The record gives the reactivity of an RNA of 177 nucleotides to DMS and 2A3. The reactions ran in a buffer of 150 mM KOAc, 10 mM MgCl2 and 150 mM bicine (pH 8.5), at 24 C. As a SHAPE reagent, 2A3 marks flexible, mostly unpaired nucleotides at the ribose 2'-OH. The 2A3 profile rests on 940 reads.

[RMDB]
RNA sequence: GGGAACGACUCGAGUAGAGUCGAAAAUGCGCGGCCGAGGUACGGCCGCGCCUGGCGCGAUCGAUCUCGCGUGAUCUCUGUGGCCUGGCCUCUGAUCUAGUACGAUCAUAGCGCGCGCACUGCGCGGGUCGUAUUGUGACUUCGGUCACAAUACGACAAAAGAAACAACAACAACAAC
Reactivity to DMS in 0.01 (KOAc 150mM, MgCl2 10mM, bicine 150mM(pH8.5), 24C), signal-to-noise 2, nucleotides 027 to 126: u000g020c050g170c020g010g020c040c010g070a170g040g000u020a120c070g040g040c010c000g070c020g020c000c050u000g030g000c030g000c020g000a000u000c090g010a080u000c150u000c050g000c060g010u000g010a060u000c010u000c050u020g000u000g000g030c050c070u010g020g010c010c040u010c120u010g020a030u000c000u000a210g010u000a080c120g000a000u010c010a040u010a130g010c010g030c000g010c050g000c210a170c230u010g000c000g000c010g020g010
Reactivity to 2A3 in 0.01 (KOAc 150mM, MgCl2 10mM, bicine 150mM(pH8.5), 24C), signal-to-noise 1, nucleotides 027 to 126: u070g000c040g040c040g120g000c030c070g120a120g040g180u210a140c050g000g020c020c010g000c030g060c000c000u010g020g030c010g000c000g010a030u210c100g070a040u000c040u020c080g040c010g000u050g040a080u080c030u000c070u000g030u060g060g010c020c060u040g020g050c030c020u010c000u010g040a090u000c010u050a070g110u130a040c180g000a020u070c010a050u150a090g060c040g000c000g000c000g050c030a190c290u200g030c000g010c000g020g060